[RMDB]
This 177-nucleotide RNA was probed chemically with 2A3 and DMS. The 2A3 profile rests on 5,318 reads. Reactivities are given for positions 27 through 126. The RNA was probed in 150 mM KOAc, 10 mM MgCl2 and 150 mM bicine (pH 8.5) at 24 C. For DMS, 7,329 sequencing reads were counted.
RNA sequence: GGGAACGACUCGAGUAGAGUCGAAAAUCAGGUAACUGCAUCUGCUUAUCAGAUCUGUUCAGAGCCGACCCUCCGUCACACCUUUGUGUUUCCCAGUAAUUCUGCCUGGCGUUGCCGUGGCUCCUCGGUUGUGAAUAAGGUUCGCCUUAUUCACAACAAAAGAAACAACAACAACAAC
Reactivity to 2A3 in 0.01 (KOAc 150mM, MgCl2 10mM, bicine 150mM(pH8.5), 24C), signal-to-noise 4, nucleotides 027 to 126: u080c000a010g040g040u080a070a060c040u060g030c040a030u000c020u040g040c050u170u120a070u250c030a000g010a040u000c020u070g070u060u080c030a030g000a020g090c020c000g060a080c020c000c000u030c020c000g040u030c000a010c000a010c040c010u050u090u130g080u020g020u050u030u000c000c010c020a010g020u060a010a120u120u040c050u070g040c010c000u020g020g030c060g170u070u170g000c010c010g050u010g010g000c010u030c020c020u020c010g120
Reactivity to DMS in 0.01 (KOAc 150mM, MgCl2 10mM, bicine 150mM(pH8.5), 24C), signal-to-noise 6, nucleotides 027 to 126: u000c060a060g010g010u000a060a050c090u010g010c150a040u000c040u010g010c160u010u000a090u010c040a070g000a030u000c050u000g010u000u000c060a080g010a140g010c040c020g000a120c100c010c010u000c030c040g000u000c070a070c070a080c060c080u000u010u000g000u000g010u000u010u000c010c000c000a140g010u010a070a120u010u000c080u010g010c030c010u000g010g010c050g010u010u020g010c020c030g000u000g010g000c030u000c030c040u000c120g010